[RMDB]
RNA sequence: GGGAACGACUCGAGUAGAGUCGAAAAGCUGAGGGCUAUUGAGGCGCAACAGCAUCUGUUGCAACUCACAGUCUGGGGCAUCAAGCAGCUCCAGGCAAGAGUCCUGGCUGUGGAAAGAUACCUAAAGCUUAAUCACAACGUUCGCGUUGUGAUUAAGAAAAGAAACAACAACAACAAC
Reactivity to 2A3 in 0.01 (KOAc 150mM, MgCl2 10mM, bicine 150mM(pH8.5), 24C), signal-to-noise 7, nucleotides 027 to 126: g050c050u200g170a040g000g000g000c000u020a090u090u140g000a000g000g020c020g000c020a000a010c000a010g110c060a140u130c050u060g000u000u000g000c000a030a040c000u000c000a020c030a010g000u000c000u000g010g010g010g010c030a030u150c070a120a090g110c070a020g000c020u010c000c010a000g010g020c040a060a030g080a000g100u010c000c000u000g010g000c000u020g010u060g080g040a120a110a040g080a070u140a120c010c010u050a110a040a020g020
Reactivity to DMS in 0.01 (KOAc 150mM, MgCl2 10mM, bicine 150mM(pH8.5), 24C), signal-to-noise 8, nucleotides 027 to 126: g010c010u000g010a030g020g010g020c010u000a090u020u010g000a010g010g010c300g010c000a000a010c000a020g030c270a180u040c030u010g010u000u000g000c010a030a290c000u000c000a090c300a150g000u000c000u000g000g000g010g000c010a090u020c190a100a160g030c230a110g000c010u000c010c000a010g010g010c000a080a070g000a050g020u010c000c000u000g000g010c000u010g010u010g000g010a080a080a060g000a150u040a050c010c020u000a060a120a120g010